The record gives the reactivity of an RNA of 177 nucleotides to DMS and 2A3. DMS adducts were read by reverse transcription with MarathonRT.

RNA sequence: GGGAACGACUCGAGUAGAGUCGAAAACGCGUCAGAUUCGUCUGACGCGAAAGCAUAGAACAGCGCUAUCAUGUAUUAUAGUUCUUUGCAACUAUAGCGCUAAAACGAUACCGUUCGCGGUAUCGAAGUAAUCUAGAUGCUUCGGCAUCUAGAUUACAAAAGAAACAACAACAACAAC
Reactivity to DMS in 0.01 (KOAc 150mM, MgCl2 10mM, bicine 150mM(pH8.5), 24C), signal-to-noise 3, nucleotides 027 to 126: c010g020c010g010u000c000a000g010a020u000u010c280g020u000c000u000g000a000c000g030c000g000a030a040a140g000c140a080u000a100g000a100a090c120a010g000c000g030c000u000a110u000c120a070u010g010u010a100u000u000a110u000a010g000u000u000c020u000u000u000g010c130a010a020c010u010a010u000a010g010c010g020c000u000a060a040a070a110c020g000a020u000a010c000c000g000u000u020c190g020c000g010g010u000a010u000c000g000a010a080
Reactivity to 2A3 in 0.01 (KOAc 150mM, MgCl2 10mM, bicine 150mM(pH8.5), 24C), signal-to-noise 5, nucleotides 027 to 126: c000g000c000g000u000c000a010g000a010u020u090c120g060u000c120u010g010a000c000g000c010g010a000a000a000g010c020a090u090a150g110a110a050c060a080g020c000g000c010u030a020u120c080a090u190g220u290a150u220u090a080u110a060g040u050u000c000u190u210u230g040c060a000a010c010u010a000u010a020g000c000g000c010u060a030a020a000a010c000g000a000u000a000c010c010g000u040u050c230g000c010g070g000u010a010u000c010g000a050a010

Overview:
The 2A3 profile rests on 7,123 reads. The reactions ran in a buffer of 150 mM KOAc, 10 mM MgCl2 and 150 mM bicine (pH 8.5), at 24 C. High DMS reactivity at an A or C suggests that its Watson-Crick edge is free.